About this RNA
Conditions: 150 mM KOAc, 10 mM MgCl2 and 150 mM bicine (pH 8.5), 24 C. Structure probing data (DMS and 2A3) for a 177-nucleotide construct. For DMS the reverse transcriptase was MarathonRT. For 2A3, 2,269 sequencing reads were counted.

RNA sequence: GGGAACGACUCGAGUAGAGUCGAAAAGAUAUGGAUGGAGACCAUAAGGGACUACAUCGGAAACGAUGUAGCACCCUUACUAGGUCGUUGAAAUCCUAAGUCAAACCGUACACUUCGGUGUACGGAAGGCCUUAGAAUUGUUCGCAAUUCUAAGGCCAAAAGAAACAACAACAACAAC
Reactivity to DMS in 0.01 (KOAc 150mM, MgCl2 10mM, bicine 150mM(pH8.5), 24C), signal-to-noise 2, nucleotides 027 to 126: g030a030u000a300u000g000g000a010u000g000g000a080g020a030c010c000a240u000a010a000g030g030g030a300c000u000a020c000a000u000c000g000g000a070a100a290c000g000a000u000g000u000a040g000c020a110c000c000c000u000u000a010c210u030a140g010g000u000c010g010u010u020g000a130a120a020u000c030c000u020a080a100g000u000c030a100a100a150c000c010g020u000a010c000a010c000u000u020c080g030g040u000g000u000a000c010g010g020a070a060
Reactivity to 2A3 in 0.01 (KOAc 150mM, MgCl2 10mM, bicine 150mM(pH8.5), 24C), signal-to-noise 1, nucleotides 027 to 126: g040a020u110a030u190g010g000a010u020g000g050a030g000a030c010c010a000u000a020a040g090g000g000a030c030u030a010c020a000u000c010g040g010a090a050a010c010g010a000u000g000u020a000g030c020a070c000c000c000u010u000a020c020u120a160g000g010u000c000g010u050u020g020a000a000a000u000c010c000u020a090a010g040u020c080a100a020a080c000c010g000u000a000c000a000c000u060u120c300g190g020u000g000u000a000c000g010g000a010a050